The record gives the reactivity of an RNA of 177 nucleotides to 2A3 and DMS.

RNA sequence: GGGAACGACUCGAGUAGAGUCGAAAACAAAUGAUCAUCUAAUAACUCUUGAUUAGAUAACAUACUUCGAUGGAUUGUAGACGUAUCUUCUGCUGGACUUUGUGAUAUACCCAAAGAAGGUAUAAAACUCCUAAAAUAGGUUCGCCUAUUUUAGGAGAAAAGAAACAACAACAACAAC
Reactivity to 2A3 in 0.01 (KOAc 150mM, MgCl2 10mM, bicine 150mM(pH8.5), 24C), signal-to-noise 4, nucleotides 027 to 126: c010a010a130a060u120g050a110u080c030a000u010c040u030a050a040u040a190a120c050u070c050u260u200g070a020u010u030a010g020a030u040a050a040c040a040u100a100c040u050u080c070g080a090u110g030g050a060u060u140g090u080a030g010a100c060g030u030a020u030c020u070u020c020u040g050c040u060g020g030a060c020u070u050u000g000u010g010a010u020a010u070a110c010c000c000a030a050a010g030a040a000g020g010u010a020u040a060a030a030a040
Reactivity to DMS in 0.01 (KOAc 150mM, MgCl2 10mM, bicine 150mM(pH8.5), 24C), signal-to-noise 5, nucleotides 027 to 126: c060a100a110a070u000g010a110u000c090a040u000c020u000a020a020u000a090a120c170u000c130u010u000g000a080u010u010a020g000a050u010a070a090c080a040u000a100c070u000u000c100g020a090u000g010g000a070u000u000g020u010a050g000a070c170g000u000a030u000c020u000u000c040u000g020c150u010g010g010a090c120u000u010u000g010u000g020a100u010a080u000a070c060c000c000a030a090a110g010a060a030g000g010u000a020u010a040a070a080a110
2A3 adducts were read by reverse transcription with SuperScript II with manganese.
Values cover nucleotides 27 to 126.